[RMDB]
RNA sequence: GGGAACGACUCGAGUAGAGUCGAAAAAAAAACGAUGAUCCAGUUGUAGCGGUGUUUAUCGUAGCUAUCAGCUGGAUCAUCAAUCGGUGGCGACACCGAACGAUAACCGCAGACAUGCUGAAAAAAAGGUACUAAUUUGGUUCGCCAAAUUAGUACCAAAAGAAACAACAACAACAAC
Reactivity to DMS in 0.01 (KOAc 150mM, MgCl2 10mM, bicine 150mM(pH8.5), 24C), signal-to-noise 2, nucleotides 027 to 126: a030a000a040a100a090c160g010a000u000g000a000u000c000c010a000g020u000u000g000u000a010g000c000g030g040u010g000u000u020u000a100u010c090g020u010a170g010c030u000a010u020c020a000g020c000u030g000g000a010u000c000a020u000c010a040a040u000c010g000g010u000g000g000c300g000a270c020a010c000c010g000a010a120c220g000a110u000a030a090c040c080g000c030a050g040a130c200a030u020g030c040u010g000a000a000a030a130a040a070a080
Reactivity to 2A3 in 0.01 (KOAc 150mM, MgCl2 10mM, bicine 150mM(pH8.5), 24C), signal-to-noise 1, nucleotides 027 to 126: a010a020a000a010a020c090g030a000u010g000a000u010c010c000a010g010u000u000g000u010a010g000c030g040g020u080g120u130u270u200a250u220c050g000u020a010g000c000u010a000u200c010a030g000c010u000g000g000a000u000c000a000u000c000a000a000u010c000g000g000u000g000g010c060g000a010c000a000c010c000g010a010a000c010g030a010u120a050a130c020c040g000c030a000g070a110c050a130u100g000c000u040g150a040a020a000a000a020a030a070